[RMDB]
RNA sequence: GGGAACGACUCGAGUAGAGUCGAAAACAAAAGGGUGUUUGCCGCUUGGAUGGCACGCGGCCCCUCGGGGUCGUGGGGUAUGGUUAUCAAGACAUACUCAACACAUAAUUUUUGUCGAGAGGAAGCAUACAAUUGAAGCGUUCGCGCUUCAAUUGUAAAAAGAAACAACAACAACAAC
Reactivity to DMS in 0.01 (KOAc 150mM, MgCl2 10mM, bicine 150mM(pH8.5), 24C), signal-to-noise 2, nucleotides 027 to 126: c000a020a010a050a060g040g040g020u030g000u000u020u000g010c000c000g040c080u000u020g010g020a160u000g010g000c000a010c020g000c000g000g010c020c000c010c030u050c300g050g000g000g010u000c020g030u000g010g000g010g000u000a020u000g000g010u010u010a150u100c250a110a070g000a080c000a010u000a000c000u020c000a030a000c020a030c020a080u070a040a030u050u000u000u020u000g000u000c090g000a150g000a100g000g000a090a090g000c100a200
Reactivity to 2A3 in 0.01 (KOAc 150mM, MgCl2 10mM, bicine 150mM(pH8.5), 24C), signal-to-noise 3, nucleotides 027 to 126: c010a000a070a020a000g160g020g000u000g000u010u010u000g000c000c010g050c110u130u120g260g150a190u090g100g000c000a000c000g000c000g000g000c000c000c000c000u050c090g020g000g000g000u000c000g000u000g000g010g000g020u000a000u010g070g010u070u120a150u270c070a050a050g030a030c000a000u000a000c000u010c000a000a010c000a000c010a000u120a090a110u060u050u030u050u030g030u050c100g020a020g000a010g180g030a090a010g020c040a040